[RMDB]
RNA sequence: GGGAACGACUCGAGUAGAGUCGAAAAAAGCAACUGUUAAGGAAGUCCGUUACCAGGCUGGAAGUGGAGAAGACGCAGCAGCACAGUCAAGCACUACAAAACAAGUAACAAAGCAGAAGGACAAAGAUGGCAUAUAAGGCUUCGGCCUUAUAUGCCAAAAAGAAACAACAACAACAAC
Reactivity to DMS in 0.01 (KOAc 150mM, MgCl2 10mM, bicine 150mM(pH8.5), 24C), signal-to-noise 1, nucleotides 027 to 126: a030a060g000c010a140a000c010u000g000u000u030a200a180g000g000a180a060g020u000c000c090g100u000u030a280c020c000a060g020g050c120u000g000g000a130a110g000u020g000g020a020g000a100a070g060a050c010g000c090a070g000c010a090g000c050a020c020a060g000u040c110a040a160g000c080a000c040u000a060c030a020a100a090a100c090a030a010g120u090a070a030c020a060a090a040g000c020a100g060a130a030g040g000a000c050a080a090a040g060a130